[RMDB]
RNA sequence: GGGAACGACUCGAGUAGAGUCGAAAAAAUGCCGCCUCAGUUCCAAGCUCUUUCGUGGCACUGUAAACAGUCCUAUUGAGUUAGGGGCAGUCAACCACGUUGCGAAGCUAAAUUAGCUGGUCGAGAGUUACGAUUCCCUACUUCGGUAGGGAAUCAAUGUUGAUUAGUGGUUCGCCACUAAUCAACAAAAAGAAACAACAACAACAAC
Reactivity to 2A3 in 0.01 (KOAc 150mM, MgCl2 10mM, bicine 150mM(pH8.5), 24C), signal-to-noise 1, nucleotides 027 to 156: a000a000u060g030c020c030g040c010c040u090c040a050g000u090u020c020c010a070a020g000c000u000c000u020u070u030c030g020u060g040g000c050a000c010u040g060u100a190a000a050c020a130g030u040c020c000u010a060u020u090g070a160g300u050u040a090g030g000g050g000c010a000g030u010c020a000a100c000c000a010c010g020u030u080g010c030g100a160a070g010c040u090a030a120a300u170u130a060g010c060u040g020g000u050c030g090a030g000a000g100u040u210a050c080g000a000u000u000c010c000c000u000a000c000u030u060c130g030g000u000a000g000g000g000a000a000u000c000a000a010
Reactivity to DMS in 0.01 (KOAc 150mM, MgCl2 10mM, bicine 150mM(pH8.5), 24C), signal-to-noise 1, nucleotides 027 to 156: a100a070u000g060c020c040g000c060c000u000c020a180g010u000u000c040c030a170a300g000c020u000c020u000u000u010c030g080u010g040g020c020a040c000u000g010u030a060a070a090c030a190g020u010c010c020u030a010u000u030g010a300g040u000u000a010g020g000g010g030c000a060g000u000c040a040a080c000c010a000c040g020u000u000g020c050g000a070a080g030c040u000a010a050a110u000u000a040g020c010u000g000g000u000c020g000a160g010a240g000u000u000a100c100g000a040u000u000c000c000c000u000a010c040u000u000c210g030g010u010a010g020g030g000a010a000u000c000a040a110
Chemical mapping of a 207-nucleotide RNA with 2A3 and DMS. Values cover nucleotides 27 to 156. Conditions: 150 mM KOAc, 10 mM MgCl2 and 150 mM bicine (pH 8.5), 24 C. DMS (dimethyl sulfate) methylates the pairing face of unpaired adenines and cytosines. Source: RMDB library M2RFPK, as collected in RNAgym.